[RMDB]
Structure probing data (2A3) for a 207-nucleotide construct. For 2A3 the reverse transcriptase was SuperScript II with manganese. The 2A3 profile rests on 862 reads.

RNA sequence: GGGAACGACUCGAGUAGAGUCGAAAACAUUACGAAUUCAGUCGCAAAUUGUAGAAUUAGCUACUCUACGAGUUAGUGAGCGUUAGUAACGUUGUAAUAUAAUAUAGUCUUUGGAAGGAUUAUAUUGGAGCCGCGGACAAGUUCGCUUGUCCGCGAACCAUUAUGCCCUCUUCGGAGGGCAUAAUGGAAAAGAAACAACAACAACAAC
Reactivity to 2A3 in 0.01 (KOAc 150mM, MgCl2 10mM, bicine 150mM(pH8.5), 24C), signal-to-noise 2, nucleotides 027 to 156: c040a080u130u140a020c030g020a050a110u090u150c070a090g170u070c060g070c100a050a090a080u100u050g030u050a040g030a050a030u120u030a040g030c000u020a030c010u000c000u000a000c030g030a050g080u080u170a050g020u100g060a040g030c050g050u040u040a050g010u130a140a030c050g000u030u040g030u050a170a050u050a060u010a130a020u000a000u000a020g010u000c030u050u100u150g110g050a110a040g040g000a000u000u000a000u010a020u010u010g040g070a070g110c100c020g000c000g000g000a000c000a010a020g010u100u150c130g060c180u000u000g000u000c030c000g000c000g000a010a000

Source: RMDB library M2RFPK, as collected in RNAgym. The RNA was probed in 150 mM KOAc, 10 mM MgCl2 and 150 mM bicine (pH 8.5) at 24 C.